[RMDB]
RNA sequence: GGGAACGACUCGAGUAGAGUCGAAAACCACCGCAAUUCGUUGCGGUGGGAAGGUGCAAUUCGCUGUCUGCACCACAGACGGCCAAUCCGUCAAAGCCAAAACUGGAGGGUCAUUCGUGACCCUCAAUAGCAGAGGAAUAUUCGUAUUCCUCUGCUAAAAAGAAACAACAACAACAAC
Reactivity to 2A3 in 0.01 (KOAc 150mM, MgCl2 10mM, bicine 150mM(pH8.5), 24C), signal-to-noise 4, nucleotides 027 to 126: c010c000a000c000c000g010c000a010a030u090u070c230g040u130u010g010c000g000g000u010g000g000g000a050a060g050g000u020g000c030a040a070u110u130c080g040c180u080g050u100c050u020g020c020a020c010c000a010c010a020g000a000c000g000g020c070c050a020a040u070c010c010g010u030c040a070a060a030g100c020c020a030a070a050a060c100u180g110g010a000g000g000g000u000c000a010u050u080c180g080u030g000a000c000c010c000u000c000a000a000
Reactivity to DMS in 0.01 (KOAc 150mM, MgCl2 10mM, bicine 150mM(pH8.5), 24C), signal-to-noise 6, nucleotides 027 to 126: c000c000a000c000c010g010c000a010a040u010u010c190g020u000u000g010c000g020g010u010g000g010g000a040a030g000g000u010g000c020a040a080u000u010c260g020c090u000g010u010c090u000g000c040a090c060c090a120c190a110g010a010c000g010g010c140c190a080a090u010c040c020g000u000c040a060a120a110g010c060c100a030a050a070a070c200u000g020g000a020g000g010g010u010c000a040u010u000c180g010u000g000a010c000c000c000u000c000a010a030
This 177-nucleotide RNA was probed chemically with 2A3 and DMS. The reactions ran in a buffer of 150 mM KOAc, 10 mM MgCl2 and 150 mM bicine (pH 8.5), at 24 C. The data come from the RNA Mapping Database (RMDB), library M2PK50. For 2A3 the reverse transcriptase was SuperScript II with manganese.